Structure probing data (DMS and 2A3) for a 177-nucleotide construct. Values are in units of 0.01, from 0 to 300, in steps of 10.
RNA sequence: GGGAACGACUCGAGUAGAGUCGAAAACAAAGAUGAUUUGGAGGGAAGUGGAUUUUUAUCGAUCACCAAAUUACUUACCCCCAACCAUUAAUAACCAAGAGCCAAUUCCAGAGGAGUGGAGAUAUCCGGUACUCUCAACUUUCGAGUUGAGAGUACCAAAAGAAACAACAACAACAAC
Reactivity to DMS in 0.01 (KOAc 150mM, MgCl2 10mM, bicine 150mM(pH8.5), 24C), signal-to-noise 1, nucleotides 027 to 126: c150a110a050a170g070a070u000g000a020u000u000u000g000g000a210g020g000g000a000a050g010u000g000g070a000u000u030u010u030u000a150u090c210g000a160u000c000a160c130c080a000a040a080u000u020a050c020u010u010a150c010c000c000c000c020a020a030c240c020a050u000u000a040a140u010a030a020c080c030a050a100g070a100g000c030c010a020a160u050u000c040c050a080g000a150g020g000a030g000u000g000g000a100g000a090u030a020u000c110c150
Reactivity to 2A3 in 0.01 (KOAc 150mM, MgCl2 10mM, bicine 150mM(pH8.5), 24C), signal-to-noise 5, nucleotides 027 to 126: c020a010a150a030g100a050u030g000a010u020u050u080g170g010a300g040g000g060a020a000g050u080g090g030a070u040u050u010u020u140a160u220c140g050a060u090c020a010c160c060a000a030a030u060u060a040c010u000u180a250c000c000c000c000c000a000a010c020c000a000u050u100a070a080u130a100a110c020c030a070a010g040a010g180c030c010a090a140u110u030c010c020a010g020a060g140g020a030g050u030g040g030a060g000a030u080a050u080c020c050
2A3 is a SHAPE reagent: it acylates the 2'-hydroxyl of flexible nucleotides of all four kinds. It was measured as part of the RMDB library OK1LIB.